[RMDB]
RNA sequence: GGGAACGACUCGAGUAGAGUCGAAAAGAGUCUGGGCCUUGCCACUCCUCACUCAGCAUCUGACCAUCCCCACCUCCUGGAUCUACAGGGUUCAUAGAGGAGGACCCAGAAGAGGGAAAGUCAGGCUGAGGAACUUGGCCUCCCUGCUGCAAGGGAAGGGCGACUCCCGAUUCGUCGGGAGUCGCCCAAAAGAAACAACAACAACAAC
Reactivity to 2A3 in 0.01 (KOAc 150mM, MgCl2 10mM, bicine 150mM(pH8.5), 24C), signal-to-noise 1, nucleotides 027 to 156: g030a020g020u000c100u110g000g050g000c000c000u020u030g030c060c010a080c110u040c000c000u070c030a080c030u060c020a000g000c020a120u140c040u010g000a020c000c000a110u170c000c000c000c000a070c000c010u000c000c000u030g010g010a010u000c000u090a250c160a280g000g060g030u010u010c040a080u130a160g090a050g110g010a000g040g010a040c060c000c000a040g050a060a000g210a200g010g000g010a060a050a000g010u000c000a000g010g050c000u000g000a000g000g000a000a070c040u050u060g020g000c000c030u020c000c000c000u080g100c090u080g060c120a060a020g020g020g060a020a150
Annotation
Chemical mapping of a 207-nucleotide RNA with 2A3.